Structure probing data (DMS and 2A3) for a 177-nucleotide construct.
The data come from the RNA Mapping Database (RMDB), library OK2TRN.
For DMS the reverse transcriptase was MarathonRT.
For DMS, 2,226 sequencing reads were counted.

RNA sequence: GGGAACGACUCGAGUAGAGUCGAAAAACUAACACCGAUAUGCUUCGGGGAGCUGUAAGUAAGCUUUGAUCCGGAGAUUUCCGAAUGGGGAAACCCACUGUUCGUAAUGGAGCAGUAUCUUACACUGACGUAGGUCUCUAUUCGUAGAGACCUACGUAAAAGAAACAACAACAACAAC
Reactivity to DMS in 0.01 (KOAc 150mM, MgCl2 10mM, bicine 150mM(pH8.5), 24C), signal-to-noise 3, nucleotides 027 to 126: a090c080u010a050a120c130a150c130c100g000a070u010a060u000g020c000u000u000c000g000g010g000g000a010g010c000u000g000u010a120a110g010u020a140a020g010c000u000u000u010g000a040u010c000c000g000g000a030g010a060u000u000u000c060c060g010a100a060u010g030g000g010g010a070a090a170c000c020c010a070c010u010g000u000u010c000g000u010a130a100u010g000g000a010g000c000a010g000u000a060u010c100u010u010a080c120a080c140u010g000
Reactivity to 2A3 in 0.01 (KOAc 150mM, MgCl2 10mM, bicine 150mM(pH8.5), 24C), signal-to-noise 1, nucleotides 027 to 126: a000c100u120a130a000c030a000c030c060g050a030u040a000u150g080c070u010u010c000g000g020g010g000a000g010c000u020g000u120a120a090g090u020a070a030g110c000u220u250u010g030a050u030c000c000g000g000a010g000a000u040u010u000c040c020g100a140a150u150g010g000g000g050a030a020a020c000c020c010a020c000u010g000u020u000c060g070u110a100a140u150g130g000a010g000c040a000g010u030a050u000c030u060u080a060c080a040c030u170g010